[RMDB]
RNA sequence: GGGAACGACUCGAGUAGAGUCGAAAAGAUUAAGUGGGAGCGUCGCCCUCUCGGUGCAUCGGAUAUUAAUUAGCCAGUGCGUGGCACUACGCAUAUUGAUGUCUACUUUGGCGUAGACUGUGCCAAUUUAAGGAUUGCUGGGCAAUCCAGCCCUAGACCAGUAUUACUAGUUCGCUAGUAAUACUGGAAAAGAAACAACAACAACAAC
Reactivity to 2A3 in 0.01 (KOAc 150mM, MgCl2 10mM, bicine 150mM(pH8.5), 24C), signal-to-noise 9, nucleotides 027 to 156: g050a040u170u190a080a050g050u090g020g030g010a040g020c030g050u050c020g040c010c020c000u040c010u010c030g030g020u050g020c030a040u070c050g050g010a010u030a050u150u140a150a070u090u080a050g030c030c020a020g020u010g030c030g020u050g020g000c030a010c050u070a030c040g010c040a020u050a080u120u160g110a090u110g020u010c010u010a030c030u110u110u160g080g000c060g010u010a010g020a030c050u030g020u020g010c000c010a020a050u080u130u100a090a020g020g010a040u030u100g020c040u080g030g060g000c030a020a020u060c000c000a010g000c000c000c010u030a040g030a050
Reactivity to DMS in 0.01 (KOAc 150mM, MgCl2 10mM, bicine 150mM(pH8.5), 24C), signal-to-noise 4, nucleotides 027 to 156: g020a160u000u010a060a090g020u000g000g000g000a080g020c050g030u010c070g020c030c010c000u000c020u010c030g010g030u000g010c020a080u010c030g020g020a080u000a040u010u000a100a110u010u000a100g020c020c010a080g020u000g010c010g030u020g020g010c070a170c030u030a100c020g010c030a130u010a100u010u000g010a120u010g010u000c040u000a070c040u010u000u000g030g010c080g010u000a040g000a030c060u010g010u010g010c000c010a020a110u000u000u010a080a120g010g000a080u000u000g010c000u000g000g010g000c040a070a100u000c080c050a090g010c000c010c010u000a110g000a220
This 207-nucleotide RNA was probed chemically with 2A3 and DMS. Reactivities are given for positions 27 through 156. The DMS profile rests on 12,387 reads. For 2A3, 11,321 sequencing reads were counted. For 2A3 the reverse transcriptase was SuperScript II with manganese.